[RMDB]
RNA sequence: GGGAACGACUCGAGUAGAGUCGAAAAGAUAUGGACUGUAUCGCUCAUCGAUCCCGGUAUACUAAGUACUAUAUCGGAAACGAUAUAGGAACUGUAUACCGGGGGAGAGCGUAAGCAGUCCUAAGUCCACUAGAUCUACGUUCGCGUAGAUCUAGUGAAAAGAAACAACAACAACAAC
Reactivity to DMS in 0.01 (KOAc 150mM, MgCl2 10mM, bicine 150mM(pH8.5), 24C), signal-to-noise 3, nucleotides 027 to 126: g010a070u000a300u010g010g000a030c010u000g000u000a270u010c000g010c000u010c000a300u010c250g000a040u020c020c000c000g000g000u000a000u000a000c010u010a040a060g010u000a160c000u000a010u000a000u000c000g000g010a100a090a240c000g010a000u000a010u000a000g010g010a120a080c130u010g000u000a000u000a010c010c000g000g000g010g000g000a020g010a010g020c000g000u010a030a160g020c000a000g000u000c000c000u000a020a060g010u000c010
Reactivity to 2A3 in 0.01 (KOAc 150mM, MgCl2 10mM, bicine 150mM(pH8.5), 24C), signal-to-noise 3, nucleotides 027 to 126: g050a020u080a060u100g000g010a000c000u000g010u030a090u140c010g010c020u010c000a300u300c090g010a030u030c010c000c010g020g010u000a010u000a000c200u230a230a000g010u000a000c000u000a000u010a010u000c010g000g060a010a040a040c010g000a000u000a010u000a000g010g000a050a010c010u030g000u000a000u010a010c010c010g000g000g000g030g000a030g000a010g010c000g000u060a300a140g000c000a000g000u000c010c000u000a010a000g010u040c020
Chemical mapping of a 177-nucleotide RNA with DMS and 2A3.
For DMS the reverse transcriptase was MarathonRT.
It was measured as part of the RMDB library TTRINS.